[RMDB]
RNA sequence: GGGAACGACUCGAGUAGAGUCGAAAAAGGUGUGAGAGAAAUGAAAACGGUAACCAGCUGCCAAUAAUUUGUCGCACACAAUCCGUUUCUCCUCUUUAUCACACAGCGGUGGCAGAGGCAGGUCGCACAGGGCAAAAUCAUUCGUGAUUUUGCCCUGAAAAGAAACAACAACAACAAC
Reactivity to DMS in 0.01 (KOAc 150mM, MgCl2 10mM, bicine 150mM(pH8.5), 24C), signal-to-noise 1, nucleotides 027 to 126: a070g010g020u000g030u020g010a020g010a020g010a010a000a020u030g000a020a050a040a090c060g000g000u010a080a210c240c220a120g000c150u010g020c050c030a000a040u030a100a120u000u000u000g030u000c170g010c000a090c080a010c190a130a080u010c000c030g010u000u000u000c000u010c070c100u000c000u000u000u010a100u010c000a030c020a000c030a160g010c050g000g010u000g010g010c030a050g000a070g010g030c090a030g000g000u010c090g000c150a200